Conditions: 150 mM KOAc, 10 mM MgCl2 and 150 mM bicine (pH 8.5), 24 C.
Chemical mapping of a 207-nucleotide RNA with 2A3.
Values are in units of 0.01, from 0 to 300, in steps of 10.

RNA sequence: GGGAACGACUCGAGUAGAGUCGAAAACUCCACGCUGGGUAAUGGACGACGGCGGCGUGUGGCGAACAGGGAUCCCGGUAGUCAGUGUCUGGAACAUCCCAAGGGGCGGCGGAGCUAGCACCCCGACAAAACGGGCACAAGUUCGCUUGUGCCCGAACCUCUAGGGAUUGUUCGCAAUCCCUAGAGGAAAAGAAACAACAACAACAAC
Reactivity to 2A3 in 0.01 (KOAc 150mM, MgCl2 10mM, bicine 150mM(pH8.5), 24C), signal-to-noise 1, nucleotides 027 to 156: c000u010c030c000a070c010g010c080u060g070g000g000u170a160a210u170g030g050a050c030g020a000c000g100g000c000g000g000c030g010u140g010u050g000g040c040g060a000a030c040a130g000g030g050a020u020c000c060c050g040g000u050a010g110u110c190a000g070u010g050u110c050u040g000g000a010a000c020a030u040c010c010c010a100a070g020g000g010g000c010g030g000c020g080g020a040g080c060u010a010g000c000a050c000c000c000c000g050a040c020a010a070a010a020c030g000g000g000c000a000c040a000a010g020u090u200c230g000c140u000u000g000u000g000c000c000c000g000a000a000